RNA sequence: GGGAACGACUCGAGUAGAGUCGAAAACUAAAGCUGUGUGCUACUAAGCAGGUGCCGAAACGACCUGUGGCCGGGGUAAUGACCUGGGGUAUAGUAAAAACGCACCAGAUGCCACAAUGGGUGAUCCGCAGCCAAGUCCUAAGGCAACAGGCCUCUUUCCUAUUUAUAUGUUCGCAUAUAAAUAGGAAAAAGAAACAACAACAACAAC
Reactivity to 2A3 in 0.01 (KOAc 150mM, MgCl2 10mM, bicine 150mM(pH8.5), 24C), signal-to-noise 1, nucleotides 027 to 156: c070u120a210a020a060g040c020u020g020u000g010u000g150c000u020a070c040u090a010a050g000c000a000g040g010u040g160c060c070g050a130a090a090c080g010a030c010c000u050g000u050g040g000c000c030g010g000g000g000u090a150a110u200g070a040c000c010u090g080g020g020g010u140a120u090a300g010u010a010a050a000a000a080c030g000c010a000c000c010a010g000a000u050g010c010c000a080c100a090a160u130g010g050g000u030g030a040u090c070c010g000c030a010g020c010c010a010a070g050u000c000c000u050a040a020g030g000c010a080a020c040a070g110g130c070c000u040c020u000u010
The record gives the reactivity of an RNA of 207 nucleotides to 2A3. The data come from the RNA Mapping Database (RMDB), library ARCHII. The RNA was probed in 150 mM KOAc, 10 mM MgCl2 and 150 mM bicine (pH 8.5) at 24 C.